[RMDB]
RNA sequence: GGGAACGACUCGAGUAGAGUCGAAAAUAAACCGGUCGUAUCUCCAAAAGAGAUAUGAAAGGAGGUGAUGGUUUUGAGUUACCUUUUCGAGCUCUUACUUAGUGUCCUGGCAAAUGUAUUGGCCUAUAGUCAAGUUACGGUUCGCCGUAACUUGACUAAAAGAAACAACAACAACAAC
Reactivity to 2A3 in 0.01 (KOAc 150mM, MgCl2 10mM, bicine 150mM(pH8.5), 24C), signal-to-noise 2, nucleotides 027 to 126: u090a020a050a010c010c000g020g010u070c030g000u000a000u000c000u000c000c000a030a000a000a030g000a000g020a000u000a000u010g010a020a050a020g140g010a160g000g030u030g040a040u070g120g190u030u180u200u300g220a200g040u070u070a000c000c000u000u020u000u000c030g020a080g120c040u000c010u040u070a040c000u000u000a030g000u000g000u010c000c000u000g020g000c030a000a020a090u210g000u090a110u060u110g020g030c000c000u080a060u090